[RMDB]
RNA sequence: GGGAACGACUCGAGUAGAGUCGAAAAGAUAUGGACAGAACUACACCUUGUACAGCAUCGAUCCCUAGCUAAGAAUCGGAAACGAUUCUUAGCUAGGGGGAGCUGUACGUGGUGCUGUCCUAAGUCACAUAGGUUUAUAGUUCGCUAUAAACCUAUGAAAAGAAACAACAACAACAAC
Reactivity to DMS in 0.01 (KOAc 150mM, MgCl2 10mM, bicine 150mM(pH8.5), 24C), signal-to-noise 9, nucleotides 027 to 126: g020a040u000a300u010g010g000a010c000a010g000a100a050c120u020a300c010a010c000c010u000u010g010u000a000c000a000g010c000a300u000c220g000a050u010c000c000c000u000a010g000c000u000a000a010g000a010a010u000c000g010g000a130a070a170c000g010a010u000u000c000u000u000a000g000c000u000a000g000g010g000g000g000a010g030c000u000g010u000a000c000g010u000g010g010u000g010c000u000g000u000c000c000u000a020a070g010u010c030a250
Reactivity to 2A3 in 0.01 (KOAc 150mM, MgCl2 10mM, bicine 150mM(pH8.5), 24C), signal-to-noise 8, nucleotides 027 to 126: g030a030u080a050u210g000g010a000c030a000g040a120a060c160u300a060c300a020c000c010u080u260g010u000a000c000a010g020c020a180u300c120g020a030u020c010c000c000u000a000g000c000u000a010a000g000a010a000u000c010g030g080a120a100a020c000g000a010u000u000c000u000u000a000g020c000u000a000g000g000g000g000g000a000g000c000u010g010u000a000c000g000u020g010g000u000g000c000u000g000u000c000c000u020a170a050g060u020c000a010